[RMDB]
RNA sequence: GGGAACGACUCGAGUAGAGUCGAAAAAGCUAUGUUCGCAUAGCUAAAAAGAUAUGGACCGUAUCAUCAGGAGGUAAUAGAGGUCGGAAACGACUACCCACCUAUUACUACCCACCCUGGUACGGUCCUAAGUCAAAAAGAUCCGUUCGCGGAUCAAAGUUAACGUUUGAUUCGUCAAACGUUAACUAAAAGAAACAACAACAACAAC
Reactivity to DMS in 0.01 (KOAc 150mM, MgCl2 10mM, bicine 150mM(pH8.5), 24C), signal-to-noise 1, nucleotides 027 to 156: a000g040c000u010a000u000g020u000u000c300g030c050a000u000a020g000c020u000a040a080a010a040a120g020a070u000a300u010g010g030a010c020c000g030u000a050u000c030a080u010c070a070g030g020a300g000g000u000a010a010u000a020g000a060g000g020u020c070g010g000a150a120a140c060g040a030c000u000a010c010c030c020a300c050c000u010a040u000u000a030c010u000a000c020c040c070a140c020c020c040u000g010g000u000a000c020g000g000u000c020c000u000a010a040g040u030c040a040a050a100a230a070g000a000u000c000c000g070u000u020c300g080c020g000g000a020u000c010a030a030
Reactivity to 2A3 in 0.01 (KOAc 150mM, MgCl2 10mM, bicine 150mM(pH8.5), 24C), signal-to-noise 3, nucleotides 027 to 156: a010g000c000u010a010u020g020u040u150c220g020c140a000u000a000g000c000u040a080a050a000a020a010g050a020u080a010u130g000g000a000c000c000g020u000a000u030c060a010u040c030a040g000g000a020g020g000u000a000a000u000a000g010a000g040g000u020c040g000g020a050a090a060c030g000a000c010u080a090c030c030c010a030c000c000u000a010u010u010a010c000u050a060c040c040c040a070c020c000c020u010g010g000u010a010c010g020g000u000c000c000u000a000a000g010u010c000a010a010a010a020a060g020a010u010c020c000g030u070u070c210g000c020g150g000a000u000c020a020a050
An RNA of 207 nucleotides, treated with DMS and 2A3 and read out base by base. Reactivities are given for positions 27 through 156. As a SHAPE reagent, 2A3 marks flexible, mostly unpaired nucleotides at the ribose 2'-OH. Source: RMDB library RNAMAK, as collected in RNAgym. 2A3 adducts were read by reverse transcription with SuperScript II with manganese.